[RMDB]
RNA sequence: GGGAACGACUCGAGUAGAGUCGAAAAGCCGAUUAUUCGGUGUUAUGGGACAAACACUCACUGAAAAGAUUCUUGAUGAUCAUCUUGUCGAAGGGAAUCUCGAACCUGGCGAAGAAAUCGGAAUUGAUAUUGACCAGGUCCUGACACAAGACACGACCAAAGGCACCUAUUUCGAUAGGUGCCUUUGAAAAGAAACAACAACAACAAC
Reactivity to DMS in 0.01 (KOAc 150mM, MgCl2 10mM, bicine 150mM(pH8.5), 24C), signal-to-noise 2, nucleotides 027 to 156: g010c010c030g010a050u020u000a170u020u010c000g050g020u000g000u000u000a060u000g000g050g010a140c070a090a120a120c070a110c030u000c040a140c060u000g010a090a080a100a150g000a060u000u000c000u000u010g010a140u010g000a120u000c040a130u010c050u000u000g020u000c020g020a210a190g010g020g000a080a110u000c050u010c060g020a090a100c000c020u000g040g030c000g030a090a140g000a060a070a060u010c040g020g000a060a140u000u010g000a100u000a160u000u000g000a040c000c020a040g010g010u000c000c020u000g010a130c110a090c050a030a040g010a070c070a080c050g040a100c070
Reactivity to 2A3 in 0.01 (KOAc 150mM, MgCl2 10mM, bicine 150mM(pH8.5), 24C), signal-to-noise 3, nucleotides 027 to 156: g010c000c010g010a040u100u070a100u220u130c030g000g000u030g030u030u090a130u130g000g020g050a070c100a040a100a010c040a020c040u060c000a040c030u040g020a030a030a000a060g110a040u040u030c010u060u130g070a120u100g040a090u050c010a020u010c040u000u020g010u010c020g020a020a000g030g000g010a060a090u090c030u100c110g010a010a000c000c000u000g010g020c010g060a070a040g080a080a170a030u050c030g010g120a080a020u090u160g010a020u020a040u090u100g120a190c000c000a000g000g000u010c020c000u000g000a000c000a000c000a010a000g010a000c050a020c100g050a030c000